[RMDB]
RNA sequence: GGGAACGACUCGAGUAGAGUCGAAAAACCAGAAUGUAUUCUGGGUCUACUUACAGUAUAUAGAAAAACUGUAUAAAGACCUUACAGGACACAUGCUUGACAGUUAUUCUGUCAUGCUAUGUGGUGAAACCACUACCGUUCGCGGUAGUGAAAAGAAACAACAACAACAAC
Reactivity to DMS in 0.01 (KOAc 150mM, MgCl2 10mM, bicine 150mM(pH8.5), 24C), signal-to-noise 9, nucleotides 027 to 129: a080c010c000a090g030a140a090u060g020u000a080u000u000c010u000g010g010g000u000c000u020a110c220u020u000a000c000a030g000u000a060u030a300u060a130g080a100a050a090a090a030c000u000g030u020a000u020a080a160a040g010a030c020c000u020u030a110c090a060g020g020a070c000a000c000a000u020g020c000u000u030g010a000c020a040g000u040u050a120u080u040c000u000g010u010c000a000u020g000c040u050a010u000g020u000g020g010u000g040a060a080a100c150
Reactivity to 2A3 in 0.01 (KOAc 150mM, MgCl2 10mM, bicine 150mM(pH8.5), 24C), signal-to-noise 9, nucleotides 027 to 129: a000c020c000a020g110a090a120u200g030u150a140u080u070c030u060g010g000g000u000c000u020a140c090u040u010a000c000a000g030u010a060u030a030u110a210g300a060a080a010a020a010c000u000g030u040a010u030a030a140a010g000a010c000c000u010u050a050c030a030g040g060a010c000a000c000a000u010g000c000u010u010g000a000c010a010g050u130u100a200u300u160c000u000g000u000c000a000u010g000c020u120a010u020g010u000g000g020u050g050a070a030a010c030